RNA sequence: GGGAACGACUCGAGUAGAGUCGAAAAAGAAACAGCCGUUUCUCACCUUACAGCUAUUAAUGCUAGUUUGGUCAUGAAUUUUAUUACAUUUGAUUUUGGUAAUAGAGGACGGCUUAAAACCGUCCUUCAGUAGCGGCUAGUUCGCUAGCCGCUACUGAAAAGAAACAACAACAACAAC
Reactivity to 2A3 in 0.01 (KOAc 150mM, MgCl2 10mM, bicine 150mM(pH8.5), 24C), signal-to-noise 2, nucleotides 027 to 126: a000g090a000a040a000c020a000g140c000c010g000u000u150u040c110u000c000a000c000c050u000u000a000c000a000g070c080u030a040u140u170a180a160u250g000c000u030a130g040u000u000u000g090g010u010c010a160u180g230a200a080u070u130u150u190a020u000u020a010c000a000u100u080u300g130a130u210u070u110u140g260g010u010a050a030u050a040g030a010g030g000a000c030g000g000c050u000u030a000a000a000a000c000c000g000u000c000c000u000u000